RNA sequence: GGGAACGACUCGAGUAGAGUCGAAAAAGAGAAUCGAGAGAAAGGUGGCUCUCCCUUAGCCAUCCGAGUGGACGUCUGUCCUCCUUCGGAUGCCCAGGUCGGACCGCGAGGAGGUGGAGAUGCCAUGCAUACACUACUCCUUCGGGAGUAGUGUAUGAAAAGAAACAACAACAACAAC
Reactivity to 2A3 in 0.01 (KOAc 150mM, MgCl2 10mM, bicine 150mM(pH8.5), 24C), signal-to-noise 4, nucleotides 027 to 126: a000g170a010g040a070a120u200c100g010a060g000a010g060a200a060a020g060g000u000g010g000c020u010c000u010c010c000c010u060u070a040g040c020c010a050u000c010c010g000a000g010u020g000g010a020c030g170u100c160u250g050u030c040c000u020c020c040u110u040c020g030g010a020u060g020c020c010c020a060g010g100u110c060g030g080a130c030c020g040c060g040a070g050g030a030g040g020u150g020g020a020g000a020u110g000c020c000a010u040g010
Reactivity to DMS in 0.01 (KOAc 150mM, MgCl2 10mM, bicine 150mM(pH8.5), 24C), signal-to-noise 5, nucleotides 027 to 126: a050g020a080g020a090a070u000c070g010a120g000a130g010a060a070a070g010g020u000g010g010c010u000c010u000c010c010c110u000u000a070g020c110c030a030u000c000c020g000a070g010u000g000g010a030c010g010u000c190u000g000u000c020c010u010c060c090u010u010c020g010g010a030u000g010c030c020c030a080g010g010u010c100g020g000a240c040c070g000c080g010a090g010g010a040g010g010u000g000g000a040g000a040u010g010c010c010a020u000g010